[RMDB]
RNA sequence: GGGAACGACUCGAGUAGAGUCGAAAACAGUUCCAAAUCGGAAGCUUGCUUAACACAGUUCUAACAGUUUGUUUAGAUAGAGAGCAGUAACCUGCUUUCUCUGCAACAUCAAUCCAGGCACAGAGCGCCGCGAGAUGGAUUGGUGUUGUUGAUCCAACUACUAAAAGAGGUUCGCCUCUUUUAGUAGAAAAGAAACAACAACAACAAC
Reactivity to 2A3 in 0.01 (KOAc 150mM, MgCl2 10mM, bicine 150mM(pH8.5), 24C), signal-to-noise 4, nucleotides 027 to 156: c030a010g010u010u000c020c000a040a110a130u200c070g040g020a060a020g090c040u090u110g040c010u120u170a190a010c070a020c030a130g070u130u060c110u130a140a080c060a130g050u060u140u050g030u030u070u140a040g010a020u050a030g010a000g000a000g000c000a010g030u080a070a150c010c010u010g000c000u030u030u010c030u000c010u010g000c010a000a000c000a000u000c000a000a000u000c000c000a020g000g040c020a060c020a150g180a090g100c070g030c040c040g020c090g100a100g040a120u110g010g000a000u000u000g000g000u000g000u000u000g010u000u020g010a000u020c010c000a000a070
Reactivity to DMS in 0.01 (KOAc 150mM, MgCl2 10mM, bicine 150mM(pH8.5), 24C), signal-to-noise 3, nucleotides 027 to 156: c040a140g030u000u010c010c000a060a130a190u010c120g010g010a070a090g030c030u000u000g030c020u000u010a130a160c100a080c060a090g020u000u000c030u000a040a080c030a150g020u000u000u000g010u000u000u040a080g020a130u000a070g010a040g040a020g090c000a070g030u000a090a160c230c030u000g000c010u000u000u000c020u000c040u020g000c010a000a020c000a000u000c000a010a020u000c010c010a090g010g000c030a180c030a160g000a190g030c150g080c070c060g000c050g010a150g020a220u000g000g000a030u010u010g010g020u010g000u000u000g010u000u010g000a230u000c030c010a060a260
This 207-nucleotide RNA was probed chemically with 2A3 and DMS. The reactions ran in a buffer of 150 mM KOAc, 10 mM MgCl2 and 150 mM bicine (pH 8.5), at 24 C. For 2A3 the reverse transcriptase was SuperScript II with manganese. The 2A3 profile rests on 2,515 reads. Source: RMDB library PDB130, as collected in RNAgym.